[RMDB]
Structure probing data (DMS and 2A3) for a 177-nucleotide construct. The data come from the RNA Mapping Database (RMDB), library OK2TRN. Values are in units of 0.01, from 0 to 300, in steps of 10. For 2A3 the reverse transcriptase was SuperScript II with manganese.

RNA sequence: GGGAACGACUCGAGUAGAGUCGAAAAGUCGCCGCGUCGACAUCAACGCCCAGCGCGGGCGAGGGACGCGUCCUACGGGGGUGCCCCAUUCGCCGGCAUGGGAGAGGACGGCAAGAUUGCCGCGACGCCGAUUAUAGUGAUUCGUCACUAUAAUCGGAAAAGAAACAACAACAACAAC
Reactivity to DMS in 0.01 (KOAc 150mM, MgCl2 10mM, bicine 150mM(pH8.5), 24C), signal-to-noise 9, nucleotides 027 to 126: g010u000c030g020c020c240g010c010g010u000c010g000a140c100a080u000c070a060a120c070g000c000c000c000a040g010c140g050c020g010g010g010c010g010a020g000g000g010a030c020g010c000g010u010c000c000u010a100c190g050g020g000g010g020u000g000c010c000c000c000a150u010u000c010g020c010c000g000g020c020a080u000g000g000g000a070g000a080g000g000a100c030g000g010c080a090a160g000a070u000u010g060c000c150g010c010g000a020c030g010
Reactivity to 2A3 in 0.01 (KOAc 150mM, MgCl2 10mM, bicine 150mM(pH8.5), 24C), signal-to-noise 9, nucleotides 027 to 126: g020u020c010g000c070c020g000c020g020u020c010g020a090c010a080u080c030a040a080c080g030c000c010c010a030g030c300g020c080g160g000g000c010g000a020g010g000g000a030c070g010c020g140u080c000c000u030a130c170g190g000g000g000g000u020g000c000c000c000c000a140u100u060c000g000c000c000g100g000c010a030u020g000g010g020a090g050a070g060g030a030c040g010g020c010a020a050g110a160u160u300g000c010c000g000c000g000a000c010g000